[RMDB]
This 207-nucleotide RNA was probed chemically with 2A3 and DMS.
The RNA was probed in 150 mM KOAc, 10 mM MgCl2 and 150 mM bicine (pH 8.5) at 24 C.
For 2A3 the reverse transcriptase was SuperScript II with manganese.
Reactivities are given for positions 27 through 156.
The 2A3 profile rests on 1,840 reads.
For DMS the reverse transcriptase was MarathonRT.
RNA sequence: GGGAACGACUCGAGUAGAGUCGAAAAGGAGGAAGGAUGUCGAACCCGAGAGGGCCUGAGGAAUCGCUUUUUAGAGUUUGACUAACAGAUUGUGUUAGUGUUUAGAGCCAGCCUAAACAACUCUUCAGAAACCUCAGGCGACAGUGAGGCUGGCUGAUAUCAUGGGUAAUUUCGAUUACCCAUGAUAAAAAGAAACAACAACAACAAC
Reactivity to 2A3 in 0.01 (KOAc 150mM, MgCl2 10mM, bicine 150mM(pH8.5), 24C), signal-to-noise 3, nucleotides 027 to 156: g040g000a020g000g030a060a000g030g010a030u090g030u100c040g010a070a080c020c020c010g020a030g000a000g020g060g010c010c000u000g010a000g010g020a030a070u040c020g030c080u190u100u110u110u150a010g000a010g000u030u080u270g110a010c010u010a000a000c010a130g170a300u220u210g050u030g000u120u010a010g000u010g020u050u030u030a030g010a000g030c020c010a000g000c000c000u010a020a010a000c010a010a010c000u020c000u170u100c070a060g010a010a030a010c000c010u000c000a030g000g010c000g010a020c010a010g070u070g030a040g030g010c000u000g010g000c010u010g000a010
Reactivity to DMS in 0.01 (KOAc 150mM, MgCl2 10mM, bicine 150mM(pH8.5), 24C), signal-to-noise 3, nucleotides 027 to 156: g020g010a070g010g020a100a050g010g010a050u010g010u000c050g000a080a210c000c010c010g000a140g010a140g020g010g010c000c000u010g030a020g030g010a050a270u000c020g020c230u000u000u000u000u000a050g010a060g010u000u000u020g030a130c010u000a010a000c010a090g010a210u000u010g060u020g010u000u000a010g040u010g010u000u000u010a040g000a140g020c000c010a040g030c040c000u000a070a000a040c020a040a040c000u000c000u000u000c070a130g000a040a040a270c010c000u000c010a040g010g000c030g020a020c050a050g020u000g000a100g000g020c000u000g010g000c000u000g000a070